[RMDB]
RNA sequence: GGGAACGACUCGAGUAGAGUCGAAAAGGCUGUCGAUCUUGGAUGUAACCUGGAACGAAAUACGGGUCGGGAAAUUCGCCUUGAUCGUGCCGGUGAUGACAUCGACCGACGGGCGCUGCGUCGCCAAGCACUGGGGACUAUUCGUAGUCCCCAGUGCAAAAGAAACAACAACAACAAC
Reactivity to 2A3 in 0.01 (KOAc 150mM, MgCl2 10mM, bicine 150mM(pH8.5), 24C), signal-to-noise 2, nucleotides 027 to 126: g030g000c030u040g020u100c010g000a050u020c020u050u090g080g070a100u050g030u080a030a060c000c020u000g020g000a020a030c000g030a050a050a040u190a050c070g050g000g080u110c020g060g090g030a090a170a050u160u100c020g010c000c000u010u030g010a000u020c000g000u020g010c000c030g000g010u040g020a150u120g030a030c010a020u010c010g030a060c030c010g060a080c070g060g040g000c010g000c040u140g080c070g070u140c010g000c030c010a030a020
Reactivity to DMS in 0.01 (KOAc 150mM, MgCl2 10mM, bicine 150mM(pH8.5), 24C), signal-to-noise 1, nucleotides 027 to 126: g020g030c050u000g020u000c030g030a040u000c020u000u000g050g010a110u010g000u000a090a090c030c010u000g000g020a080a040c020g010a060a110a160u010a210c140g000g000g030u000c000g000g000g000a060a060a160u020u020c030g000c010c000u000u000g020a070u000c020g000u000g010c000c000g030g040u000g000a150u000g000a100c010a080u000c020g010a030c060c020g000a060c080g020g000g020c080g000c080u000g000c130g020u000c050g010c010c080a080a070

Chemical mapping of a 177-nucleotide RNA with 2A3 and DMS. The DMS profile rests on 1,141 reads. The reactions ran in a buffer of 150 mM KOAc, 10 mM MgCl2 and 150 mM bicine (pH 8.5), at 24 C. The data come from the RNA Mapping Database (RMDB), library OK2TST. Reactivities are given for positions 27 through 126.